[RMDB]
RNA sequence: GGGAACGACUCGAGUAGAGUCGAAAAGGAAAAGGGUCCCAUGUGAACUGAACUCAACUUGGAUUUGUGCAAAGGUGACUAGGCAUUUCACAGCGUGAAUGGGAGAAUAGGGAGAAGGCCAGCCUAGGACAGUGGGAGUAUUCGUACUCCCACUGUCAAAAGAAACAACAACAACAAC
Reactivity to DMS in 0.01 (KOAc 150mM, MgCl2 10mM, bicine 150mM(pH8.5), 24C), signal-to-noise 2, nucleotides 027 to 126: g000g010a050a080a060a120g020g000g010u000c000c030c040a120u000g040u010g000a050a080c080u010g020a150a090c140u010c050a040a020c070u010u010g000g010a170u020u010u010g000u010g010c090a020a060a030g000g010u010g010a120c090u000a070g000g030c220a100u000u000u000c030a030c040a070g020c120g010u010g010a030a050u010g040g010g010a090g010a060a040u000a070g010g000g010a100g010a080a080g010g010c020c040a060g020c000c030u000a100g010
Reactivity to 2A3 in 0.01 (KOAc 150mM, MgCl2 10mM, bicine 150mM(pH8.5), 24C), signal-to-noise 1, nucleotides 027 to 126: g050g000a010a120a060a020g040g010g040u000c050c030c000a040u080g030u050g050a050a050c050u020g040a050a030c020u020c050a050a080c050u040u080g060g010a110u100u090u130g070u060g050c030a040a050a150g000g030u030g000a030c020u010a040g060g000c010a010u040u070u100c050a010c000a030g070c050g080u040g030a130a040u060g030g030g050a080g020a030a020u030a100g020g040g000a050g010a050a050g030g000c000c000a010g020c030c030u040a060g070